[RMDB]
RNA sequence: GGGAACGACUCGAGUAGAGUCGAAAACGGUGCCGCGCGUCGGCGCGACAUGCACUGCACAUCGGCUCUGGAGAACACCCUCGGGUGCCACCUGAUGUGAGCUGUCCUGCUUGGCGUCAGGCAGAAAAAAGUAUUCUGUUUUCGAACAGAAUACUUUAAAAGAAACAACAACAACAAC
Reactivity to DMS in 0.01 (KOAc 150mM, MgCl2 10mM, bicine 150mM(pH8.5), 24C), signal-to-noise 9, nucleotides 027 to 126: c040g010g010u000g010c010c010g010c220g010c020g010u010c110g000g000c010g020c300g000a020c050a040u030g020c020a060c110u010g020c040a030c040a050u000c010g010g000c050u010c030u000g000g000a080g000a160a300c040a020c030c010c010u020c300g030g010g010u000g000c010c010a050c110c000u000g000a020u000g010u000g000a070g010c000u000g000u010c030c030u010g000c020u000u010g020g010c020g010u010c080a240g010g000c040a050g000a000a040a060
Reactivity to 2A3 in 0.01 (KOAc 150mM, MgCl2 10mM, bicine 150mM(pH8.5), 24C), signal-to-noise 9, nucleotides 027 to 126: c020g070g050u050g000c010c000g030c010g000c010g070u040c050g080g000c000g010c020g000a010c010a030u260g010c050a040c110u190g060c050a010c000a010u000c000g000g000c010u000c010u040g020g010a090g030a090a020c010a020c010c030c000u040c150g080g000g000u000g010c010c000a130c060c000u010g000a010u000g000u010g010a020g000c010u020g020u050c000c010u040g010c020u100u300g050g000c010g020u060c040a040g000g000c010a000g040a030a070a010